An RNA of 177 nucleotides, treated with 2A3 and DMS and read out base by base. The 2A3 profile rests on 7,058 reads. DMS adducts were read by reverse transcription with MarathonRT. For DMS, 3,677 sequencing reads were counted. It was measured as part of the RMDB library M2PK50.
[RMDB]
RNA sequence: GGGAACGACUCGAGUAGAGUCGAAAAUAUCCUCGUUUCGACGAGGAUAACAGAAAACUCAUGCCAAAUAAAACGCUGACAGGCAUGAGAAAAGUCAGCGUAACAUACGGGUCUUCGGACCCGUAAAGUACCCUAACUUAUUCGUAAGUUAGGGUACAAAAGAAACAACAACAACAAC
Reactivity to 2A3 in 0.01 (KOAc 150mM, MgCl2 10mM, bicine 150mM(pH8.5), 24C), signal-to-noise 4, nucleotides 027 to 126: u060a000u000c000c000u010c000g000u030u050u080c190g100a010c000g000a000g000g020a000u000a000a010c010a010g190a040a090a030a030c010u010c010a010u020g010c000c010a140a300a030u170a060a100a030a020c100g000c000u000g020a000c010a030g000g010c000a020u040g010a010g000a010a090a000a000g010u010c000a000g000c000g060u050a050a010c010a020u060a020c000g020g000g000u000c000u030u080c140g090g000a000c000c010c000g000u000a000a000a000
Reactivity to DMS in 0.01 (KOAc 150mM, MgCl2 10mM, bicine 150mM(pH8.5), 24C), signal-to-noise 3, nucleotides 027 to 126: u000a020u000c000c000u000c000g000u010u000u010c130g010a020c000g010a020g000g000a000u000a000a070c190a150g000a120a060a110a080c000u000c010a030u000g000c000c010a140a090a120u000a040a030a080a110c100g010c010u000g000a030c030a090g010g000c000a030u000g000a030g000a040a050a050a090g000u000c000a010g010c010g040u010a060a060c160a140u000a010c000g010g000g000u000c000u000u010c180g020g000a010c010c000c000g010u000a000a030a080